[RMDB]
RNA sequence: GGGAACGACUCGAGUAGAGUCGAAAACGUGUUAAGUCUUCUCGUCUAUUAGCGACAGAUAGGGCGUAGAAAGGAUGUGAUUGUCGUCUAGAUAUGUCAGGACAGGAACUCCUUGGCAGGUGGCACGCCAUGCUGGUACUUUCGAGUACCAGCAUGGAAAAGAAACAACAACAACAAC
Reactivity to 2A3 in 0.01 (KOAc 150mM, MgCl2 10mM, bicine 150mM(pH8.5), 24C), signal-to-noise 6, nucleotides 027 to 126: c040g040u050g040u090u080a090a040g010u030c000u040u030c030u030c010g030u010c020u020a110u080u110a060g070c040g060a040c020a020g050a030u080a060g050g020g010c000g020u030a040g100a050a060a000g080g020a050u140g030u040g040a060u040u050g010u020c030g020u010c060u060a110g030a150u170a130u210g130u060c020a030g000g060a050c020a020g040g050a020a020c010u030c000c000u030u030g040g020c010a000g000g060u020g040g010c030a010c020g010
Reactivity to DMS in 0.01 (KOAc 150mM, MgCl2 10mM, bicine 150mM(pH8.5), 24C), signal-to-noise 4, nucleotides 027 to 126: c070g000u000g010u000u000a050a080g010u000c020u010u020c010u000c040g000u000c030u020a090u030u020a090g000c040g000a060c060a040g000a080u010a020g010g000g000c030g020u030a060g000a070a060a130g020g020a050u010g030u000g000a160u040u000g000u010c020g020u050c060u020a100g010a120u030a070u010g020u000c050a080g000g010a030c040a040g020g000a220a030c060u010c000c010u010u010g030g000c070a030g000g010u010g000g010c040a040c060g010
Source: RMDB library OK1LIB, as collected in RNAgym.
The record gives the reactivity of an RNA of 177 nucleotides to 2A3 and DMS.
For DMS the reverse transcriptase was MarathonRT.
For 2A3 the reverse transcriptase was SuperScript II with manganese.